[RMDB]
RNA sequence: GGGAACGACUCGAGUAGAGUCGAAAAAGAAAGGAGGCCCGGUUACCUAUAUAGAGAUAAUGAUACCGGCCCGCGCGCGCUGGCUGGCCUCCGCAUUGAAUAGAGUAGGUACACGCGCGCGAAAAAACAACUUAAUACCGUUCGCGGUAUUAAGUUGAAAAGAAACAACAACAACAAC
Reactivity to 2A3 in 0.01 (KOAc 150mM, MgCl2 10mM, bicine 150mM(pH8.5), 24C), signal-to-noise 2, nucleotides 027 to 126: a030g040a000a020a020g030g010a060g010g010c100c110c000g000g040u020u060a050c000c000u030a050u040a050u090a270g150a030g030a210u090a200a130u180g050a040u050a150c020c000g000g010c010c000c010g000c000g000c010g000c010g020c060u040g050g000c020u020g020g000c010c000u000c010c010g000c020a100u130u280g050a080a070u110a130g060a030g070u080a020g000g040u050a100c020a000c040g000c000g000c000g020c030g010a020a050a020a000a000a000
Reactivity to DMS in 0.01 (KOAc 150mM, MgCl2 10mM, bicine 150mM(pH8.5), 24C), signal-to-noise 2, nucleotides 027 to 126: a080g020a050a060a160g030g010a120g000g010c080c000c200g010g010u000u000a040c010c030u000a090u010a270u000a110g010a170g010a120u000a030a110u010g010a120u010a040c020c010g000g010c060c020c020g010c020g030c010g030c000g010c050u010g000g000c090u010g010g010c040c000u000c000c020g000c140a090u030u000g040a100a180u000a050g010a110g010u000a100g000g000u010a050c090a060c070g000c000g010c020g010c000g000a010a060a020a110a040a050
The record gives the reactivity of an RNA of 177 nucleotides to 2A3 and DMS. Reactivities are given for positions 27 through 126. The RNA was probed in 150 mM KOAc, 10 mM MgCl2 and 150 mM bicine (pH 8.5) at 24 C. The DMS profile rests on 1,342 reads. Source: RMDB library M2PK90, as collected in RNAgym.